An RNA of 177 nucleotides, treated with DMS and 2A3 and read out base by base. The data come from the RNA Mapping Database (RMDB), libraries RFM100 and RFMREP. Reactivities are given for positions 27 through 126.
[RMDB]
RNA sequence: GGGAACGACUCGAGUAGAGUCGAAAAAGAGAGAGAGUACAGCUUUGGGCGGUUUAGUUGUUAGAUGGUGGAAGUACUUGCGACGCCUACUACCCUUUUCACCAAGGCUGUACGCUCCCUCUUCUUCGCUGCUAUGAAAAUUCGUUUUCAUAGCAGCAAAAGAAACAACAACAACAAC
Reactivity to DMS in 0.01 (KOAc 150mM, MgCl2 10mM, bicine 150mM(pH8.5), 24C), signal-to-noise 2, nucleotides 027 to 126: a000g010a020g000a050g010a030g000a050g010u000a000c020a000g000c000u000u000u000g000g000g000c190g030g000u000u010u030a080g000u040u010g000u020u020a030g010a300u000g000g030u000g000g010a110a110g010u010a050c190u010u020g010c130g010a200c010g000c050c010u010a290c000u000a030c050c060c000u000u000u020u000c040a130c020c000a020a010g010g000c000u000g000u000a000c000g000c000u000c010c010c000u000c000u000u020c000u000u010c300
Reactivity to 2A3 in 0.01 (KOAc 150mM, MgCl2 10mM, bicine 150mM(pH8.5), 24C), signal-to-noise 8, nucleotides 027 to 126: a000g000a000g000a000g000a000g000a000g000u000a000c000a000g000c010u020u010u010g030g040g010c210g100g020u050u040u040a030g000u020u130g080u070u030a040g000a090u060g030g030u040g040g050a160a030g040u090a220c080u110u170g050c040g020a030c030g040c000c000u030a120c000u020a020c020c000c000u020u020u020u050c030a040c000c000a000a000g010g000c000u000g010u000a000c000g010c000u000c000c000c000u010c000u020u010c040u040u030c070